An RNA of 177 nucleotides, treated with DMS and 2A3 and read out base by base. Values are in units of 0.01, from 0 to 300, in steps of 10. DMS adducts were read by reverse transcription with MarathonRT. The 2A3 profile rests on 3,181 reads.
[RMDB]
RNA sequence: GGGAACGACUCGAGUAGAGUCGAAAACUGGAGGGAAAAGGGAUGAUGAGAGCCAACUGUUUUCCCAUUGAAAGUAUAAGCAUUUCAAGUGCACUAAGUUUAAGACUGGCAAGGGAUUGCCAGGAAGCUGCUACUCAAGAUUCGUCUUGAGUAGCAGAAAAGAAACAACAACAACAAC
Reactivity to DMS in 0.01 (KOAc 150mM, MgCl2 10mM, bicine 150mM(pH8.5), 24C), signal-to-noise 3, nucleotides 027 to 126: c050u000g010g040a100g030g000g010a020a050a060a060g000g010g010a120u010g020a130u010g010a190g000a060g010c060c020a050a080c030u010g030u000u000u000u000c000c000c010a210u000u010g020a060a070a060g000u000a130u010a080a130g000c040a020u010u000u010c220a090a130g020u000g000c040a080c150u010a050a060g000u000u010u000a050a070g000a240c000u010g000g010c000a010a000g010g020g000a190u000u000g010c000c000a010g000g010a060a080g010
Reactivity to 2A3 in 0.01 (KOAc 150mM, MgCl2 10mM, bicine 150mM(pH8.5), 24C), signal-to-noise 3, nucleotides 027 to 126: c030u020g020g060a050g030g010g020a000a040a040a030g050g020g010a020u070g020a020u050g020a050g000a010g090c020c000a010a030c020u010g140u100u010u010u010c020c000c020a010u030u080g040a060a030a000g060u090a060u070a290a040g000c020a040u050u140u250c130a210a010g030u000g040c040a030c120u090a070a070g050u030u130u120a080a040g070a060c010u000g010g000c000a010a020g130g000g050a140u030u010g000c000c000a000g000g000a000a010g030